Overview
The data come from the RNA Mapping Database (RMDB), library OK1LIB. Structure probing data (2A3 and DMS) for a 177-nucleotide construct. 2A3 adducts were read by reverse transcription with SuperScript II with manganese. The reactions ran in a buffer of 150 mM KOAc, 10 mM MgCl2 and 150 mM bicine (pH 8.5), at 24 C.
[RMDB]
RNA sequence: GGGAACGACUCGAGUAGAGUCGAAAAAGCGCCAUCCAGCCGUUAAUCGUGGGCGAUAACAGCCGUGCAUUGCGCCUGGCGGAGGCGCUGCGUCAACAAGGAUGCUGGGCGACGGCGAUUCGCCCGCCUAUAUUACGAGGUUCGCCUCGUAAUAUAGAAAAGAAACAACAACAACAAC
Reactivity to 2A3 in 0.01 (KOAc 150mM, MgCl2 10mM, bicine 150mM(pH8.5), 24C), signal-to-noise 9, nucleotides 027 to 126: a000g020c020g000c010c000a140u030c010c010a050g080c030c030g090u080u170a110a070u130c050g010u050g010g000g020c010g000a010u060a110a080c050a030g000c000c010g020u050g040c070a170u060u300g050c010g000c010c000u020g020g000c030g020g030a030g010g000c000g000c010u010g000c020g080u070c020a110a180c030a130a090g180g010a050u160g010c060u100g040g020g000c050g030a020c000g020g030c010g010a050u050u000c000g000c000c000c000g000c000
Reactivity to DMS in 0.01 (KOAc 150mM, MgCl2 10mM, bicine 150mM(pH8.5), 24C), signal-to-noise 9, nucleotides 027 to 126: a040g000c010g020c000c000a130u010c020c010a120g010c100c050g010u010u020a050a100u030c100g010u010g000g010g010c000g010a040u020a070a080c130a200g000c010c010g020u000g010c140a120u030u030g020c020g000c080c000u000g000g020c030g000g000a110g010g000c010g010c000u000g000c070g010u010c070a100a100c210a110a100g000g010a100u020g010c010u020g000g000g000c010g000a030c020g000g010c030g000a150u010u010c000g000c000c000c000g000c030